[RMDB]
RNA sequence: GGGAACGACUCGAGUAGAGUCGAAAAUUACAACCAUGCAGUUUAGCAGUUGCUUAUGAUAAUGGAUAUGCGUUGUGUGCCGAAUCUGUGACGGGGGUAGAUAAUGACUUGGUGACAGGGAACACCAACUUUAGGUCAUCUUCGGAUGACCUAAAGUAAAAGAAACAACAACAACAAC
Reactivity to 2A3 in 0.01 (KOAc 150mM, MgCl2 10mM, bicine 150mM(pH8.5), 24C), signal-to-noise 1, nucleotides 027 to 126: u060u090a020c010a020a040c030c020a040u110g040c050a030g030u110u150u180a030g000c000a000g050u200u100g010c020u070u040a050u160g060a060u030a230a050u100g030g080a030u060a050u230g030c060g000u080u090g050u000g060u000g050c010c040g000a040a100u000c050u020g060u020g070a030c070g000g000g000g060g020u020a050g020a110u050a070a070u210g140a060c010u020u030g020g020u010g000a010c000a030g000g150g000a000a010c010a010c040c000a010
Reactivity to DMS in 0.01 (KOAc 150mM, MgCl2 10mM, bicine 150mM(pH8.5), 24C), signal-to-noise 4, nucleotides 027 to 126: u010u010a050c070a050a090c020c020a090u000g010c040a070g010u000u000u000a080g020c030a110g010u010u000g010c060u010u000a060u000g010a130u010a090a080u020g010g020a070u000a030u000g000c110g020u010u020g010u010g020u000g000c040c030g000a080a040u010c060u000g000u010g010a100c080g010g000g010g010g010u000a010g010a080u010a070a090u000g000a090c130u000u000g000g020u010g010a080c120a110g010g000g020a060a110c070a060c040c040a030
Record summary:
This 177-nucleotide RNA was probed chemically with 2A3 and DMS.